[RMDB]
This 207-nucleotide RNA was probed chemically with 2A3 and DMS. The DMS profile rests on 12,011 reads. The RNA was probed in 150 mM KOAc, 10 mM MgCl2 and 150 mM bicine (pH 8.5) at 24 C. It was measured as part of the RMDB library M2RFPK. The 2A3 profile rests on 12,043 reads. For 2A3 the reverse transcriptase was SuperScript II with manganese.
RNA sequence: GGGAACGACUCGAGUAGAGUCGAAAACCUAUCCAAAAUGAGAUCCCAUCUUGCACACUGUGCUAAUUUGUGAUUCUCAUGCCUCCUACUUGGAGAGAUCUGGACUAGAAGUCAGGGCAUCUGACUCAAUACAUUCGUCAGUUCGCUGACGAAUGAAUCUUUAUAUCUACUUCGGUAGAUAUAAAGAAAAAGAAACAACAACAACAAC
Reactivity to 2A3 in 0.01 (KOAc 150mM, MgCl2 10mM, bicine 150mM(pH8.5), 24C), signal-to-noise 9, nucleotides 027 to 156: c000c000u010a060u040c010c010a050a050a020a080u010g000a000g000a010u000c030c030c000a000u000c010u010u030g020c010a020c030a080c210u300g010u020g000c050u150a040a060u020u010u010g010u000g020a020u300u040c000u000c000a000u020g020c010c000u000c000c010u110a300c130u160u290g000g010a010g000a010g020a070u050c090u110g020g000a020c020u040a080g040a140a010g080u000c000a000g020g040g220c070a110u080c080u000g010a010c010u000c020a050a100u100a120c010a000u000u000c000g000u000c000a000g010u010u090c170g010c120u000g000a000c000g000a000a000u000g000a000a010
Reactivity to DMS in 0.01 (KOAc 150mM, MgCl2 10mM, bicine 150mM(pH8.5), 24C), signal-to-noise 4, nucleotides 027 to 156: c030c010u000a080u010c030c020a040a050a130a150u010g000a050g000a050u000c010c040c000a060u000c080u000u020g020c010a040c020a200c160u020g020u000g010c020u010a020a040u000u000u000g030u000g010a030u000u010c020u000c010a060u010g010c030c010u000c000c010u000a140c200u010u040g000g000a050g020a100g010a070u000c060u010g000g010a150c110u000a120g010a100a070g010u000c010a020g010g010g030c130a130u010c010u000g010a050c010u010c050a080a100u010a170c020a020u000u000c000g010u000c000a020g000u000u010c300g020c000u000g000a020c000g010a010a000u000g000a060a110